This 177-nucleotide RNA was probed chemically with DMS and 2A3. For 2A3, 3,042 sequencing reads were counted. The reactions ran in a buffer of 150 mM KOAc, 10 mM MgCl2 and 150 mM bicine (pH 8.5), at 24 C. Source: RMDB library OK2TST, as collected in RNAgym. The DMS profile rests on 3,101 reads.

[RMDB]
RNA sequence: GGGAACGACUCGAGUAGAGUCGAAAAUUCGCGCUCUCGGUGGCGGUGAUGUGCCUGGUACUGGCGAUGAUUAUCUUCCUGCCGCAACGUUUUGCCCGUUAUGGCCUGCUGGUCGGCACCAUAACCGGAGAAUAUUGCAGUUCGCUGCAAUAUUCUCAAAAGAAACAACAACAACAAC
Reactivity to DMS in 0.01 (KOAc 150mM, MgCl2 10mM, bicine 150mM(pH8.5), 24C), signal-to-noise 3, nucleotides 027 to 126: u010u010c050g030c050g000c050u010c070u000c030g010g020u000g010g020c040g010g000u010g000a090u010g000u010g020c020c010u000g010g030u010a060c100u000g020g020c130g010a090u010g000a130u000u000a090u010c100u000u000c010c040u010g000c050c030g010c060a050a050c100g000u000u000u000u010g020c080c060c020g000u010u000a020u000g010g000c270c100u010g000c030u000g010g010u010c080g010g020c040a050c020c030a030u000a060a050c060c170g020
Reactivity to 2A3 in 0.01 (KOAc 150mM, MgCl2 10mM, bicine 150mM(pH8.5), 24C), signal-to-noise 3, nucleotides 027 to 126: u050u030c030g000c000g000c030u020c000u020c050g090g000u040g040g000c050g000g040u080g010a070u070g010u080g000c000c010u070g080g100u130a100c080u030g010g000c050g020a070u080g020a050u070u200a040u060c030u050u050c010c030u040g020c000c010g040c030a050a080c040g010u030u040u170u200g050c010c020c000g000u020u030a040u070g020g000c040c070u020g000c000u050g040g140u110c060g030g000c020a000c020c010a030u050a050a030c010c040g070